[RMDB]
RNA sequence: GGGAACGACUCGAGUAGAGUCGAAAAGAUAUGGAAUACUCGAUGCCGUUUGACGGUUUCGGAAACGAAACCCGAGGAACUACAUCCGGAGUAUUCCUAAGUCAAAAGUGUACGUUCGCGUACACAAUCCCUCUUCCUUGUUCGCAAGGAAGAGGGAAAAAGAAACAACAACAACAAC
Reactivity to 2A3 in 0.01 (KOAc 150mM, MgCl2 10mM, bicine 150mM(pH8.5), 24C), signal-to-noise 1, nucleotides 027 to 126: g000a000u040a060u220g000g010a010a000u020a040c000u010c000g020a020u000g000c030c050g050u000u000u110g040a010c020g000g000u000u000u000c010g010g060a100a000a050c000g000a010a020a010c030c010c000g010a050g150g200a030a000c000u010a010c080a020u060c100c270g140g020a020g000u010a010u020u010c000c000u000a050a000g090u000c050a060a030a030a210g000u030g000u020a020c030g000u010u080c300g000c000g150u010a000c010a010c000a000a080
Reactivity to DMS in 0.01 (KOAc 150mM, MgCl2 10mM, bicine 150mM(pH8.5), 24C), signal-to-noise 2, nucleotides 027 to 126: g000a040u020a300u000g000g010a000a030u000a000c000u000c020g010a000u000g000c030c070g010u000u010u000g010a300c300g020g000u000u000u000c000g000g010a120a120a160c000g000a030a000a000c000c030c010g000a300g000g010a000a010c030u010a070c000a020u000c040c300g000g000a020g010u000a000u000u030c010c000u010a000a070g000u000c010a140a130a100a090g010u000g030u000a010c000g020u010u010c220g040c010g040u000a000c000a000c000a110a170

Chemical mapping of a 177-nucleotide RNA with 2A3 and DMS.
DMS adducts were read by reverse transcription with MarathonRT.
Values cover nucleotides 27 to 126.
Conditions: 150 mM KOAc, 10 mM MgCl2 and 150 mM bicine (pH 8.5), 24 C.
For 2A3, 1,933 sequencing reads were counted.
For 2A3 the reverse transcriptase was SuperScript II with manganese.